[RMDB]
RNA sequence: GGGAACGACUCGAGUAGAGUCGAAAAUUAUUUGCUGGGAAAUGGAAAACUACCCUUCCUUGGCGGGUAGAAUCUCCUGAGCUGCAUGCAGUUCAGGUACAUUUAGGUGGCUCUUCAUUGCAAUGGAAUACUAGCCCACUUUCGAGUGGGCUAGUAUAAAAGAAACAACAACAACAAC
Reactivity to DMS in 0.01 (KOAc 150mM, MgCl2 10mM, bicine 150mM(pH8.5), 24C), signal-to-noise 1, nucleotides 027 to 126: u000u010a060u000u010u000g010c070u000g000g010g000a080a090a080u000g010g000a140a060a060a140c060u010a070c050c000c040u010u000c000c030u000u010g010g010c300g010g010g020u000a080g000a060a040u000c150u000c010c000u010g010a070g020c010u000g020c060a140u010g010c000a000g030u000u000c010a020g020g010u000a050c130a060u000u000u000a110g000g000u000g020g000c020u000c060u000u000c040a040u000u000g010c060a080a110u020g010g010a130
Background:
Structure probing data (DMS) for a 177-nucleotide construct. It was measured as part of the RMDB library OK2TRN. The RNA was probed in 150 mM KOAc, 10 mM MgCl2 and 150 mM bicine (pH 8.5) at 24 C. For DMS the reverse transcriptase was MarathonRT.